[RMDB]
RNA sequence: GGGAACGACUCGAGUAGAGUCGAAAAACGAUGCUUUUCAUCUGACGAAGAACGAUCACCGCAGACAACCGAACUCCUGAAAGCAAACAAAACAGCCUAUUCCAUUUAAAAAGCGCAUGCCGAAGAUCAUAGUACCUUGAUUCGUCAAGGUACUAUGAAAAGAAACAACAACAACAAC
Reactivity to DMS in 0.01 (KOAc 150mM, MgCl2 10mM, bicine 150mM(pH8.5), 24C), signal-to-noise 5, nucleotides 027 to 126: a070c100g000a070u020g000c120u000u000u000u020c050a070u010c030u030g010a090c090g010a110a130g020a080a090c110g020a040u000c030a030c000c030g010c080a060g020a060c070a080a050c060c050g000a080a090c010u010c030c020u000g000a070a090a090g010c080a030a050a070c090a060a040a070a090c090a050g000c030c020u000a070u010u000c000c020a110u020u010u040a010a070a080a030a070g010c060g000c050a020u000g020c010c030g020a090a110g000a100u000
Reactivity to 2A3 in 0.01 (KOAc 150mM, MgCl2 10mM, bicine 150mM(pH8.5), 24C), signal-to-noise 9, nucleotides 027 to 126: a000c060g030a030u080g030c050u070u070u090u090c030a050u010c040u080g040a060c050g050a070a100g040a090a030c030g020a020u070c020a020c030c010g000c020a020g030a070c030a050a040c030c010g030a040a030c010u010c020c010u040g040a040a020a000g040c000a040a050a050c040a020a090a030a020c030a010g020c000c000u030a060u050u040c010c020a040u070u120u240a090a140a030a020a010g040c050g000c030a030u090g020c010c020g060a050a020g030a040u020
Description
This 177-nucleotide RNA was probed chemically with DMS and 2A3. The data come from the RNA Mapping Database (RMDB), libraries RFM100 and RFMREP.